[RMDB]
RNA sequence: GGGAACGACUCGAGUAGAGUCGAAAAGGCAACGAGCGAGACCCAUUUCCACUGUUGCUAACGACUCCGCGAGGAGGGCGAGUACACUGUGGAGACCGCUGGCGCUAAGUCAGAGGAAGGAUUGGUCCGAGAGAAGGUCUUUCGAGACCUUCUCUCGAAAAGAAACAACAACAACAAC
Reactivity to 2A3 in 0.01 (KOAc 150mM, MgCl2 10mM, bicine 150mM(pH8.5), 24C), signal-to-noise 4, nucleotides 027 to 126: g080g010c050a050a070c110g050a020g060c010g010a060g030a060c020c010c020a050u050u080u000c010c000a000c010u040g050u070u060g050c000u020a020a000c000g010a000c000u000c000c000g030c080g050a080g000g010a000g000g060g000c000g010a010g000u000a010c020a000c190u030g000u000g000g000a000g020a010c010c010g000c010u000g000g000c010g030c190u260a150a010g000u010c010a000g000a030g020g030a070a040g050g010a080u030u090g000g020u000c030
Reactivity to DMS in 0.01 (KOAc 150mM, MgCl2 10mM, bicine 150mM(pH8.5), 24C), signal-to-noise 2, nucleotides 027 to 126: g000g000c070a140a030c070g030a110g020c030g030a100g010a100c050c040c150a300u000u020u000c000c000a000c000u010g000u000u000g000c000u020a000a040c000g000a230c000u000c000c000g000c300g000a170g000g000a000g000g000g020c010g000a020g010u000a010c130a020c060u010g010u000g000g000a000g000a060c000c050g000c000u000g030g000c040g010c110u050a060a140g030u000c010a020g020a000g030g010a180a060g000g000a130u010u020g010g000u000c060